[RMDB]
RNA sequence: GGGAACGACUCGAGUAGAGUCGAAAAAUCUUUUGUGAGUGUCAAGGUGGAAGCACUCAAUGUGUUUUUAUUUUAAAGUAAGGGAUUUCAGGCAAGAACCUUAUGAAAAGUUGGUAAGAUUUUGGACUAUGAGGGUAAUAAAGAAGAUAUCUGCAGAAUACUAUGGUUUGUUCGCAAACCAUAGUAUAAAAGAAACAACAACAACAAC
Reactivity to DMS in 0.01 (KOAc 150mM, MgCl2 10mM, bicine 150mM(pH8.5), 24C), signal-to-noise 2, nucleotides 027 to 156: a030u000c030u010u000u000u010g030u000g020a070g030u010g010u020c040a020a060g010g020u000g010g030a120a190g020c030a040c010u000c090a070a100u010g000u000g010u010u010u010u010u000a050u030u000u040u000a080a070a300g010u000a050a070g000g020g010a120u000u000u000c040a080g030g030c050a060a090g000a050a090c020c050u010u000a040u010g000a080a070a040a150g020u000u000g000g020u000a050a100g000a080u000u020u000u000g010g010a060c020u010a070u000g010a050g010g020g040u000a050a080u000a070a040a120g000a050a090g000a090u000a050u010c050u000g010c050a120g020a150
Reactivity to 2A3 in 0.01 (KOAc 150mM, MgCl2 10mM, bicine 150mM(pH8.5), 24C), signal-to-noise 2, nucleotides 027 to 156: a000u000c020u040u100u080u160g100u020g040a030g000u050g020u050c070a100a030g050g000u040g010g030a040a000g030c020a010c020u060c050a060a030u030g030u000g050u050u030u010u140u090a150u080u100u020u100a070a080a040g010u000a000a060g040g010g020a060u090u140u130c080a020g010g020c010a020a030g000a020a040c000c030u010u060a040u030g050a030a060a030a040g050u070u050g010g030u010a030a050g010a040u060u020u020u100g030g000a000c060u050a050u060g040a020g000g050g000u040a010a040u070a080a060a080g050a030a000g030a040u070a010u110c020u030g030c060a000g160a060